[RMDB]
Chemical mapping of a 177-nucleotide RNA with 2A3 and DMS. 2A3 adducts were read by reverse transcription with SuperScript II with manganese. The 2A3 profile rests on 4,323 reads. For DMS the reverse transcriptase was MarathonRT.

RNA sequence: GGGAACGACUCGAGUAGAGUCGAAAAGAUAUGGAAUCAUAUCUUUAUUCGGCAUCUUUUGACGGACUCGUUCGGAAACGAACGGCAUGUCCGAUAAGAUGCGAAUAAAGAUAUGAUUCCUAAGUCACCACAUACCUAUCUUCGGAUAGGUAUGUGGAAAAGAAACAACAACAACAAC
Reactivity to 2A3 in 0.01 (KOAc 150mM, MgCl2 10mM, bicine 150mM(pH8.5), 24C), signal-to-noise 2, nucleotides 027 to 126: g000a040u030a040u100g010g000a040a010u000c010a000u000a020u020c000u020u020u020a020u000u010c040g300g130c010a000u000c030u040u170u210u270g300a250c060g000g000a000c010u020c010g000u000u000c010g010g040a150a120a070c020g000a020a010c000g020g050c170a070u300g020u000c000c000g010a000u010a000a010g000a000u000g010c000g000a000a010u000a020a000a010g000a010u010a000u000g000a000u000u000c000c000u010a000a000g020u000c030a000
Reactivity to DMS in 0.01 (KOAc 150mM, MgCl2 10mM, bicine 150mM(pH8.5), 24C), signal-to-noise 1, nucleotides 027 to 126: g000a040u030a300u010g000g000a030a020u020c010a000u000a010u000c000u000u000u000a010u000u000c000g010g040c010a010u000c000u000u000u020u030g020a240c120g000g000a040c010u000c000g000u000u000c000g010g000a060a080a260c000g010a020a000c000g000g010c300a060u010g000u000c000c010g010a090u000a000a000g010a020u010g020c000g000a000a010u000a000a030a000g000a000u000a000u000g000a000u000u000c000c000u000a000a100g010u010c060a300